This 207-nucleotide RNA was probed chemically with 2A3 and DMS. Conditions: 150 mM KOAc, 10 mM MgCl2 and 150 mM bicine (pH 8.5), 24 C. Values cover nucleotides 27 to 156. Source: RMDB library OK3TST, as collected in RNAgym. For 2A3 the reverse transcriptase was SuperScript II with manganese.

RNA sequence: GGGAACGACUCGAGUAGAGUCGAAAACGCUCGCGUCGACAUGUAUGCCGUCGCACCGCUUCUCCCAGGCGACAAAGUUGCCGGCCGGGUGGCGUCUAGAGGUGAGCAUUUCGAAUGGUCUCCGCCGUCCACAUCGGUUCAUUCGUCUGAUCCGAUAUGUAAAAACCGAAUUCGUUCGGUUUUUACAAAAAGAAACAACAACAACAAC
Reactivity to 2A3 in 0.01 (KOAc 150mM, MgCl2 10mM, bicine 150mM(pH8.5), 24C), signal-to-noise 2, nucleotides 027 to 156: c050g000c020u060c050g000c010g070u030c010g010a100c030a050u150g170u300a090u120g000c020c030g100u030c010g010c000a100c040c030g030c030u080u030c050u070c030c000c030a020g020g000c010g000a010c060a080a240a000g040u020u030g000c040c040g000g030c040c020g020g000g010u010g010g000c000g020u050c080u110a080g000a040g020g000u030g040a040g050c000a020u040u030u170c090g080a100a000u040g040g050u020c010u010c020c010g000c010c000g030u050c050c020a040c010a140u030c000g000g000u050u070c030a050u080u060c030g040u080c070u050g030a030u050c060c050g030a080u050a140
Reactivity to DMS in 0.01 (KOAc 150mM, MgCl2 10mM, bicine 150mM(pH8.5), 24C), signal-to-noise 2, nucleotides 027 to 156: c050g020c020u000c100g030c030g040u010c000g030a030c030a120u010g050u010a150u000g030c010c000g020u000c000g050c000a080c110c010g050c000u010u030c060u000c020c020c010a240g030g000c030g020a050c060a120a140a200g000u010u000g030c030c040g030g010c010c060g010g010g010u000g000g010c100g020u020c040u010a150g000a050g000g010u010g000a080g030c020a060u000u000u010c100g010a110a070u010g010g010u000c020u000c020c020g010c000c030g000u010c030c040a060c090a050u010c000g010g020u000u000c040a090u000u000c050g020u010c020u010g010a300u000c010c000g020a070u010a110
The 2A3 profile rests on 1,342 reads.